[RMDB]
Source: RMDB library M2RFOK, as collected in RNAgym.
The record gives the reactivity of an RNA of 207 nucleotides to 2A3.
2A3 adducts were read by reverse transcription with SuperScript II with manganese.
Values cover nucleotides 27 to 156.
The RNA was probed in 150 mM KOAc, 10 mM MgCl2 and 150 mM bicine (pH 8.5) at 24 C.

RNA sequence: GGGAACGACUCGAGUAGAGUCGAAAAACAGAAAAAAGGAGUUUAAAUUAGAUUUGCAAACGGACGGUACUAAAUACAGUCACUUUUACGUCUAACUUAUCGUUAACUCUGCAAAAAGAAAACAAGAAAAACAAGCGUGAGUUCGCUCACGCUUGAAGCUACACUCUCAGUUCGCUGAGAGUGUAGCAAAAGAAACAACAACAACAAC
Reactivity to 2A3 in 0.01 (KOAc 150mM, MgCl2 10mM, bicine 150mM(pH8.5), 24C), signal-to-noise 1, nucleotides 027 to 156: a000c020a020g140a030a030a000a000a000a040g060g000a030g010u070u100u100a040a110a110u070u040a030g000a060u030u000u160g030c030a100a060a040c090g020g000a010c080g010g010u030a030c040u110a050a150a140u230a050c100a020g020u120c030a010c080u000u060u110u130a050c000g000u000c000u000a030a020c000u060u000a020u040c000g070u030u010a010a010c020u000c010u040g010c030a020a020a030a030a030g040a050a050a030a030c040a000a000g060a170a050a010a010a030c000a000a000g030c020g000u000g000a030g010u030u060c130g010c070u000c000a000c000g000c010u000u000g000a000a000